[RMDB]
RNA sequence: GGGAACGACUCGAGUAGAGUCGAAAAGGAAUCGACAGUAGAGUGUAUCAUGUCAGUAAGCAUGCCGGAGAAUGGUGGUUUACCCCGUUAUCAAAUGAUUACCGACCAAUAAUUGGCGAAACUCGUUAGGCCCGUCCACACUUCGGUGUGGACGGAAUGUAGACCCAUGAUUCGUCAUGGGUCUACAAAAAGAAACAACAACAACAAC
Reactivity to 2A3 in 0.01 (KOAc 150mM, MgCl2 10mM, bicine 150mM(pH8.5), 24C), signal-to-noise 2, nucleotides 027 to 156: g070g020a030a070u040c060g020a010c040a050g070u120a070g080a020g140u060g000u020a040u140c090a050u060g030u020c010a000g060u090a020a000g010c030a060u130g050c020c020g000g000a020g040a020a090u090g030g050u000g040g030u040u050u080a040c010c000c020c010g000u070u030a060u070c090a010a050a130u080g000a020u040u100a100c060c020g100a100c020c060a010a010u150a170a060u060u070g050g000c030g070a040a040a040c080u030c030g040u040u000a060g000g060c010c000c000g000u000c000c020a000c020a000c000u000u120c210g000g000u000g000u000g000g020a000c010g000g000a000a000
Reactivity to DMS in 0.01 (KOAc 150mM, MgCl2 10mM, bicine 150mM(pH8.5), 24C), signal-to-noise 1, nucleotides 027 to 156: g000g040a120a060u000c060g030a050c020a080g020u000a130g020a180g060u000g040u000a040u000c000a250u010g020u000c050a060g060u020a060a090g010c010a010u000g010c050c060g000g040a110g000a060a050u000g010g020u000g000g000u000u000u010a110c010c000c000c010g020u000u000a040u000c020a120a060a020u000g010a090u000u000a020c000c000g050a040c000c000a040a080u000a090a130u000u010g000g010c000g020a090a090a080c040u010c060g030u000u020a140g020g000c090c000c010g000u010c000c010a010c000a010c000u000u000c300g050g010u000g070u000g010g030a000c030g010g000a010a000